[RMDB]
RNA sequence: GGGAACGACUCGAGUAGAGUCGAAAAGACGGAAAAGAUCGAACCUAAGAAUAUCAGGAAAUGUGAGCCGAAUCCUAGGGCUCCUAGGCACGCAUCGUCCGAUGCGAAAUAAACACUAACGUCGAAAGCCAUAUUACUCAUUCGUGAGUAAUAUGGCAAAAGAAACAACAACAACAAC
Reactivity to 2A3 in 0.01 (KOAc 150mM, MgCl2 10mM, bicine 150mM(pH8.5), 24C), signal-to-noise 5, nucleotides 027 to 126: g020a000c000g040g070a060a080a050a000g080a030u160c080g050a040a080c010c000u030a110a020g070a150a080u190a040u190c090a040g050g150a070a120a070u090g130u090g010a010g020c000c020g050a070a050u040c010c010u040a050g080g000g000c010u000c000c000u020a010g050g000c050a000c070g000c000a010u010c040g240u090c120c200g010a010u020g000c030g020a040a020a020u130a030a080a010c030a000c050u070a130a010c020g020u010c020g050a050a010a000
Reactivity to DMS in 0.01 (KOAc 150mM, MgCl2 10mM, bicine 150mM(pH8.5), 24C), signal-to-noise 4, nucleotides 027 to 126: g010a060c000g000g010a070a090a060a070g020a120u010c100g000a080a140c010c000u000a070a080g010a060a100u020a080u050c090a040g000g000a070a160a090u010g000u060g000a080g020c030c020g010a090a090u020c040c020u000a110g030g000g000c050u020c010c000u000a060g000g000c170a180c000g060c010a000u000c000g010u090c180c190g020a010u000g020c000g000a020a040a030u020a110a060a060c160a030c080u000a080a080c080g010u000c020g000a090a080a120